This 177-nucleotide RNA was probed chemically with 2A3 and DMS. It was measured as part of the RMDB library OK2TST. The 2A3 profile rests on 11,303 reads. The reactions ran in a buffer of 150 mM KOAc, 10 mM MgCl2 and 150 mM bicine (pH 8.5), at 24 C. Reactivities are given for positions 27 through 126.

RNA sequence: GGGAACGACUCGAGUAGAGUCGAAAACUGCACCCACCAGAGCAAGAGCCAACUGAAAGCGUAGACCUGAGAAGAGGUAACUCAGCCCCUUCCUGCUCCUCUGCCCUCAUCAGAUGUCCCCAGGAGCCAAAAAUGUAAGAUUCGUCUUACAUUUUUGAAAAGAAACAACAACAACAAC
Reactivity to 2A3 in 0.01 (KOAc 150mM, MgCl2 10mM, bicine 150mM(pH8.5), 24C), signal-to-noise 5, nucleotides 027 to 126: c030u050g010c020a060c010c020c020a020c010c030a040g020a010g060c020a080a030g010a020g080c010c030a060a050c060u080g060a150a040a020g010c010g020u050a010g050a110c000c010u050g030a050g030a190a020g040a030g050g000u040a070a040c030u020c060a030g000c010c000c000c000u020u030c000c010u000g020c010u000c010c000u000c010u030g010c000c000c010u030c010a050u030c010a010g070a170u080g060u060c000c000c000c010a030g040g020a020g010c020
Reactivity to DMS in 0.01 (KOAc 150mM, MgCl2 10mM, bicine 150mM(pH8.5), 24C), signal-to-noise 9, nucleotides 027 to 126: c070u000g010c080a120c030c010c020a100c100c050a070g010a090g020c060a060a070g010a100g010c030c040a060a090c080u000g000a070a080a110g010c070g010u000a070g010a080c080c030u000g010a090g010a100a070g010a050g000g000u000a060a090c060u000c060a090g000c030c010c020c030u000u000c020c020u000g000c040u000c020c010u000c050u000g000c040c020c020u010c050a050u000c050a060g000a090u000g000u000c010c000c000c080a080g000g000a090g010c110